[RMDB]
RNA sequence: GGGAACGACUCGAGUAGAGUCGAAAAAUUGGAUGCUUGCGCUGGUGAGCAUGGAACAUACAGUCUGAAAAGGUUACCUCGUCCCUUAUCUGUCACUGAGAAGUGUUCCUCAUGCUCAGGGAUAGGAUAAACACUCGGUUUUCGAACCGAGUGUUUAAAAAGAAACAACAACAACAAC
Reactivity to 2A3 in 0.01 (KOAc 150mM, MgCl2 10mM, bicine 150mM(pH8.5), 24C), signal-to-noise 1, nucleotides 027 to 126: a010u080u070g060g030a050u100g050c080u050u060g000c050g000c120u070g080g040u040g000a020g030c010a010u020g000g020a010a010c000a020u140a020c040a010g000u000c020u090g060a030a040a000a030g000g000u070u060a100c050c000u000c010g040u080c000c010c060u040u020a110u030c010u010g080u060c020a000c040u030g020a020g000a240a080g040u020g040u070u050c020c000u030c010a040u100g010c000u010c010a000g020g010g020a040u080a050g010g050a030
Reactivity to DMS in 0.01 (KOAc 150mM, MgCl2 10mM, bicine 150mM(pH8.5), 24C), signal-to-noise 3, nucleotides 027 to 126: a110u000u000g000g020a050u000g000c030u000u000g010c070g030c100u000g000g000u000g000a010g000c020a030u010g000g010a040a030c060a060u010a120c060a070g000u000c030u010g010a030a100a080a050g000g000u010u000a120c060c040u010c060g000u000c100c010c010u000u010a050u010c020u000g010u000c120a020c010u000g000a080g010a080a110g010u010g010u000u000c010c060u010c120a070u000g010c010u000c020a050g000g010g010a060u000a050g020g010a210

Structure probing data (2A3 and DMS) for a 177-nucleotide construct. Values are in units of 0.01, from 0 to 300, in steps of 10. DMS adducts were read by reverse transcription with MarathonRT. It was measured as part of the RMDB library OK2TST. In probing experiments dimethyl sulfate is read out at A N1 and C N3, which are open when not base-paired.